[RMDB]
The data come from the RNA Mapping Database (RMDB), library OK2TST.
Structure probing data (DMS) for a 177-nucleotide construct.

RNA sequence: GGGAACGACUCGAGUAGAGUCGAAAACACGAUGGCAAAACGCAUUACUUAUCUUGCCCCUGGAAAUCACCGCUCUUGAACUGGCGGAUGUAGAGAUAGACAGUGUGUUUGGAGAUGUUCAGGCGGAUGGCGGUCAGUGAUUCGUCACUGACCGCCAAAAAGAAACAACAACAACAAC
Reactivity to DMS in 0.01 (KOAc 150mM, MgCl2 10mM, bicine 150mM(pH8.5), 24C), signal-to-noise 1, nucleotides 027 to 126: c100a140c130g000a170u010g010g030c080a090a010a020a010c090g020c000a120u000u000a240c090u000u000a050u010c070u010u000g000c010c010c070c050u020g000g000a220a060a080u000c090a100c030c010g000c000u010c080u000u000g000a070a090c130u000g000g040c000g030g020a090u000g000u030a050g000a070g000a070u000a140g020a070c080a030g010u000g000u030g030u000u020u000g010g000a220g000a020u000g020u000u000c060a040g010g010c130g030g000a180
DMS adducts were read by reverse transcription with MarathonRT. DMS (dimethyl sulfate) methylates the pairing face of unpaired adenines and cytosines. The RNA was probed in 150 mM KOAc, 10 mM MgCl2 and 150 mM bicine (pH 8.5) at 24 C.